[RMDB]
The record gives the reactivity of an RNA of 207 nucleotides to DMS and 2A3. For DMS, 7,925 sequencing reads were counted.
RNA sequence: GGGAACGACUCGAGUAGAGUCGAAAACGGUUACGCCAUCUUUACCGUUAUCAAGGAAGGUACUCGGCCAUGCUAAGGGAAGCAUUAUUCCUUAGGCGCAUGUCGCCGCCAGCAUGGUGUGAGGGGAAAAAGUAUGCUGGGUUCGCCCAGCAUACAACUCAAUCUAUGUCUUCGGACAUAGAUUGAGAAAAGAAACAACAACAACAAC
Reactivity to DMS in 0.01 (KOAc 150mM, MgCl2 10mM, bicine 150mM(pH8.5), 24C), signal-to-noise 3, nucleotides 027 to 156: c010g010g000u000u000a030c060g000c030c020a070u010c020u000u000u010a040c000c000g010u000u000a040u000c110a080a090g020g010a080a060g000g010u000a080c030u000c000g020g020c000c010a040u000g010c000u000a160a120g000g000g020a030a090g030c170a180u010u000a140u000u000c010c000u000u000a110g020g010c010g020c010a090u000g020u000c040g030c020c010g000c120c090a070g020c000a020u010g000g030u030g020u000g010a060g000g000g030g000a030a060a090a160a120g000u000a010u000g000c000u010g010g030g030u000u000c300g030c010c010c000a030g010c000a000u000a000c000a060a140
Reactivity to 2A3 in 0.01 (KOAc 150mM, MgCl2 10mM, bicine 150mM(pH8.5), 24C), signal-to-noise 7, nucleotides 027 to 156: c010g000g020u060u050a060c100g060c050c020a080u060c080u040u090u070a030c010c000g100u050u090a080u150c090a040a030g070g020a050a050g040g020u050a040c000u000c000g030g000c000c000a000u000g000c000u050a050a070g010g010g010a020a010g020c090a180u110u120a120u200u120c010c000u030u070a050g000g000c000g020c050a110u220g110u270c040g020c030c010g020c030c020a000g000c000a000u020g020g010u060g130u140g020a010g010g010g000g050a030a120a000a020a000g010u000a000u000g000c000u000g000g020g020u020u020c160g100c030c000c000a000g000c000a000u000a000c000a000a000